Structure probing data (2A3 and DMS) for a 177-nucleotide construct. 2A3 adducts were read by reverse transcription with SuperScript II with manganese. The data come from the RNA Mapping Database (RMDB), library OK1LIB. As a SHAPE reagent, 2A3 marks flexible, mostly unpaired nucleotides at the ribose 2'-OH. The DMS profile rests on 957 reads. Conditions: 150 mM KOAc, 10 mM MgCl2 and 150 mM bicine (pH 8.5), 24 C. For 2A3, 493 sequencing reads were counted.

[RMDB]
RNA sequence: GGGAACGACUCGAGUAGAGUCGAAAAAUGGAAAAUGUGCACAAAUCAUGCGAUCAUCAAAACGUGCAUGUGGUUUACUAAGUAUUCCAACAUGGCCAAAAAUAGGCGCUUUAAGCGACAGAGCAACAAUCGUAGGCAGGUUCGCCUGCCUACGAUUAAAAGAAACAACAACAACAAC
Reactivity to 2A3 in 0.01 (KOAc 150mM, MgCl2 10mM, bicine 150mM(pH8.5), 24C), signal-to-noise 2, nucleotides 027 to 126: a000u240g080g030a030a130a000a010u200g000u170g010c000a000c020a020a010a140u160c020a070u190g010c050g200a120u000c020a000u000c010a020a020a030a020c010g080u080g000c030a020u030g010u000g000g120u030u110u030a150c030u000a240a000g000u000a000u000u060c030c030a080a130c130a140u080g230g070c000c000a070a170a070a000a000u060a290g050g000c000g050c000u000u150u000a120a070g040c000g100a080c060a060g110a000g070c000a000a010c020
Reactivity to DMS in 0.01 (KOAc 150mM, MgCl2 10mM, bicine 150mM(pH8.5), 24C), signal-to-noise 1, nucleotides 027 to 126: a130u010g000g000a010a100a000a160u000g020u000g130c020a000c040a060a060a120u050c000a000u000g000c030g020a070u020c020a090u030c110a040a050a160a200c240g000u000g000c070a040u000g000u000g000g000u010u010u000a070c010u000a010a160g050u000a060u000u000c000c000a090a000c000a030u000g030g060c000c060a070a000a080a050a130u140a160g000g020c220g000c010u000u000u000a300a010g070c050g000a100c040a090g000a060g020c000a040a050c300